[RMDB]
RNA sequence: GGGAACGACUCGAGUAGAGUCGAAAAGAUAUGGACCAAGGGAGCUCUAAGAUCGAUGAGUCGGAAACGACGAGAUCGAUGAGCGAAGAACUUGGUCCUAAGUCAAACUCGUAGUUCGCUACGAGAACAAUUAAGUGGUGUUCGCACCACUUAAUUGAAAAGAAACAACAACAACAAC
Reactivity to DMS in 0.01 (KOAc 150mM, MgCl2 10mM, bicine 150mM(pH8.5), 24C), signal-to-noise 9, nucleotides 027 to 126: g010a040u000a300u000g010g010a010c000c000a010a010g000g010g010a100g010c000u000c000u000a170a260g010a010u000c000g020a130u010g010a240g010u000c000g000g010a090a090a180c010g020a010c000g000a130g010a010u000c000g000a190u010g000a000g000c000g000a070a090g000a120a160c000u000u000g000g010u000c000c000u000a000a060g010u000c040a070a090a140c010u000c000g020u000a010g010u000u020c240g020c010u000a000c000g000a010g010a140a180
Reactivity to 2A3 in 0.01 (KOAc 150mM, MgCl2 10mM, bicine 150mM(pH8.5), 24C), signal-to-noise 5, nucleotides 027 to 126: g010a010u070a020u130g000g000a000c000c000a000a010g030g010g030a050g030c000u010c020u090a180a080g060a090u010c030g110a160u160g110a080g030u010c010g000g020a090a050a030c020g010a000c040g020a030g010a070u000c000g010a030u100g010a000g000c000g000a000a020g000a010a010c000u000u000g000g000u000c010c000u000a020a000g010u010c010a010a050a110c000u010c010g000u000a000g030u050u060c300g000c130u010a000c000g000a000g010a030a050